[RMDB]
RNA sequence: GGGAACGACUCGAGUAGAGUCGAAAAGCGAGAUUGUCCGACCGCAUCAACCAACAAUGCUCAAAAAAGAAAGAUCUUAUCAUAUCCACUUGUUUAAGCAGUAAAGAUAAGAAAGAACUUGCAGAAACCUAGUAGGUUAAUUCGUUAACCUACUAGGAAAAGAAACAACAACAACAAC
Reactivity to DMS in 0.01 (KOAc 150mM, MgCl2 10mM, bicine 150mM(pH8.5), 24C), signal-to-noise 5, nucleotides 027 to 126: g010c060g020a050g010a120u000u010g010u010c040c070g020a140c100c050g010c050a060u000c080a070a100c060c040a050a070c110a060a060u010g010c030u010c050a000a070a070a090a090a070g010a090a100a070g010a100u000c010u000u000a040u000c010a040u010a110u010c070c090a070c030u000u000g020u000u010u010a050a040g010c040a050g000u010a080a090a120g000a020u010a010a010g010a020a080a090g000a050a090c040u000u000g010c090a140g000a140a110a140
Reactivity to 2A3 in 0.01 (KOAc 150mM, MgCl2 10mM, bicine 150mM(pH8.5), 24C), signal-to-noise 3, nucleotides 027 to 126: g040c020g010a040g020a160u050u110g030u060c040c040g020a050c000c040g000c000a040u060c030a040a060c040c010a000a050c020a040a090u090g010c030u060c090a090a130a070a050a010a030g090a040a100a000g060a050u030c000u020u050a110u080c020a030u010a080u120c050c030a040c040u080u070g090u210u300u140a070a030g040c030a010g020u060a070a050a030g020a010u020a010a010g000a010a040a000g050a050a040c020u040u090g000c040a040g210a250a040a020